RNA sequence: GGGAACGACUCGAGUAGAGUCGAAAAGCCUUUGAAUUAGGAGUUCUUAGGUUCUUUUAUUGUGCUUACAUGGUUUUUGUUCGGGUGGGAUGGGUCUUCUACCAUGUGAUGAGGUUAUAAGGGCCAAGGACGAACUUUGCUUCGGCGAAGUUCGUCCAAAAGAAACAACAACAACAAC
Reactivity to 2A3 in 0.01 (KOAc 150mM, MgCl2 10mM, bicine 150mM(pH8.5), 24C), signal-to-noise 2, nucleotides 027 to 126: g050c000c000u020u030u020g140a100a080u230u120a070g170g040a020g110u020u000c000u000u000a020g010g010u010u010c030u090u100u020u100a170u060u140g090u080g020c010u070u000a000c000a030u020g010g060u010u010u010u060u180g160u060u090c020g000g070g090u220g100g010g150a120u100g020g010g000u000c000u060u000c000u000a020c000c010a000u000g060u010g050a070u150g000a010g040g000u080u000a090u050a170a050g000g010g000c040c010a000a080